[RMDB]
RNA sequence: GGGAACGACUCGAGUAGAGUCGAAAAGAUAUGGACACUUUGUCAGCGAUCAAUAAGAGCAACAGCAGAGCUCGGAAACGAGCUCUGACAUGCUCUGAACUUCGCUUGGAUUUAAGUGUCCUAAGUCCAUCAGGUAAUGGUUCGCCAUUACCUGAUGAAAAGAAACAACAACAACAAC
Reactivity to 2A3 in 0.01 (KOAc 150mM, MgCl2 10mM, bicine 150mM(pH8.5), 24C), signal-to-noise 4, nucleotides 027 to 126: g050a050u110a060u240g020g000a000c000a000c000u000u030u030g010u020c000a010g000c000g000a010u030c010a070a300u050a050a010g000a000g030c000a010a160c050a150g070c000a010g020a000g010c000u010c010g010g010a060a060a010c010g000a000g000c020u010c000u000g010a010c010a000u040g000c000u000c000u000g010a010a000c020u010u000c000g050c020u060u150g110g000a070u290u300u220a010a010g000u000g000u000c000c000u000a030a000g020u000c000
Reactivity to DMS in 0.01 (KOAc 150mM, MgCl2 10mM, bicine 150mM(pH8.5), 24C), signal-to-noise 6, nucleotides 027 to 126: g010a100u000a300u010g020g000a010c000a000c000u000u000u000g010u000c010a060g010c000g000a010u000c030a040a130u000a150a020g000a020g010c000a040a100c300a220g000c010a000g000a010g020c000u010c000g000g000a070a080a210c020g010a010g000c010u000c000u000g000a020c100a230u000g000c000u000c000u000g000a150a140c110u000u000c000g020c000u000u010g030g010a010u000u010u000a010a010g020u000g000u000c000c000u000a030a070g010u000c030